An RNA of 177 nucleotides, treated with 2A3 and DMS and read out base by base. For DMS the reverse transcriptase was MarathonRT. The RNA was probed in 150 mM KOAc, 10 mM MgCl2 and 150 mM bicine (pH 8.5) at 24 C.
RNA sequence: GGGAACGACUCGAGUAGAGUCGAAAAGAUAUGGAUCAGGGACAUGUACACACGUCGGAAACGACGUGGUACAACAGCCCUAUCCUAAGUCAAAACGAACAAUUAGGCUUCGGCCUAAUUGUUCGAAUCUCAGUAUAGACUUCGGUCUAUACUGAGAAAAAGAAACAACAACAACAAC
Reactivity to 2A3 in 0.01 (KOAc 150mM, MgCl2 10mM, bicine 150mM(pH8.5), 24C), signal-to-noise 4, nucleotides 027 to 126: g020a020u070a020u110g020g000a020u070c240a040g000g020g000a030c080a170u100g010u050a010c300a000c000a000c110g020u000c000g010g040a070a070a020c010g000a000c000g000u010g000g000u010a000c000a010a010c030a020g040c000c000c010u010a000u000c000c000u000a110a010g040u010c040a000a030a080a150c020g000a010a010c000a020a000u010u000a000g000g000c010u060u090c300g010g000c020c000u000a000a000u010u000g000u000u010c000g000a000a000
Reactivity to DMS in 0.01 (KOAc 150mM, MgCl2 10mM, bicine 150mM(pH8.5), 24C), signal-to-noise 5, nucleotides 027 to 126: g010a040u000a300u010g000g000a000u000c180a020g000g000g010a040c080a160u000g010u000a020c020a120c010a000c010g010u000c000g000g010a100a100a190c010g010a020c000g020u000g010g010u000a000c010a010a030c270a150g000c010c000c000u000a030u000c000c000u000a060a130g010u000c020a070a060a120a210c000g000a000a000c000a010a010u000u000a000g000g000c000u000u010c240g030g010c000c000u000a000a000u000u000g000u010u000c000g000a040a070